The record gives the reactivity of an RNA of 207 nucleotides to 2A3.
RNA sequence: GGGAACGACUCGAGUAGAGUCGAAAAAGAUGAAUUUGACAUUGAAGUUUGGGAAUGCAAUGCGGAAGCUUUUUACGUCUACUUGGGGAUGGGGACCCAAUGGCGUGAAUCGUUUGCAGGGCGCACCGGACUUGAUUAUUCCGCAAUGCCUGUAGUAAGAAUAUUGCAGGUUCGCCUGCAAUAUUCUAAAAGAAACAACAACAACAAC
Reactivity to 2A3 in 0.01 (KOAc 150mM, MgCl2 10mM, bicine 150mM(pH8.5), 24C), signal-to-noise 1, nucleotides 027 to 156: a030g130a140u150g030a110a150u170u160u180g040a020c010a010u060u070g070a080a010g070u070u050u140g040g000g050a090a030u180g010c030a020a000u090g030c070g040g070a010a050g040c000u040u000u020u030u090a000c030g010u020c030u090a090c090u030u010g000g000g000g000a030u100g020g030g000g040a030c000c000c020a000a000u050g000g000c010g000u020g000a020a000u010c010g050u050u080u100g050c010a030g030g000g000c040g000c000a030c040c030g020g000a000c000u010u010g020a030u090u120a100u110u010c010c000g060c050a040a050u050g040c000c010u120g040u130a070g030u050a110